[RMDB]
The record gives the reactivity of an RNA of 177 nucleotides to 2A3 and DMS. The RNA was probed in 150 mM KOAc, 10 mM MgCl2 and 150 mM bicine (pH 8.5) at 24 C. The 2A3 profile rests on 1,220 reads. For DMS, 1,115 sequencing reads were counted.

RNA sequence: GGGAACGACUCGAGUAGAGUCGAAAAGUAACCGGCGAACAUGGGAUUUUGCAGCAGCCAAUGGCCGGAUAUGACGAUCCCGAGACCAUAGCUGUAGCCGUCGUUCUGCUCGAAGCAGGUGGGGCAGCCAGACUAUGCGAUUCGUCGCAUAGUCUGGAAAAGAAACAACAACAACAAC
Reactivity to 2A3 in 0.01 (KOAc 150mM, MgCl2 10mM, bicine 150mM(pH8.5), 24C), signal-to-noise 3, nucleotides 027 to 126: g050u060a000a150c000c010g000g000c000g020a080a040c030a130u140g020g030g150a190u070u170u150u300g010c020a050g000c000a000g010c020c000a070a050u080g010g000c000c000g010g020a020u040a100u120g040a050c110g010a020u040c000c030c000g020a050g000a050c050c080a070u050a070g020c010u010g010u050a060g060c020c000g030u160c030g020u180u090c030u020g110c030u110c220g070a060a010g020c020a040g010g040u050g000g020g010g000c000a030g040
Reactivity to DMS in 0.01 (KOAc 150mM, MgCl2 10mM, bicine 150mM(pH8.5), 24C), signal-to-noise 1, nucleotides 027 to 126: g000u000a000a090c040c010g000g000c010g000a150a160c140a120u010g000g040g010a130u000u000u000u010g000c120a190g020c100a160g020c010c000a110a040u050g000g000c040c000g020g000a030u040a000u030g050a060c160g010a070u010c010c000c000g150a130g000a160c110c110a050u030a120g000c030u000g010u000a140g030c010c100g010u010c180g030u000u050c010u020g000c000u010c110g010a140a000g010c010a000g010g000u000g000g010g000g010c000a010g000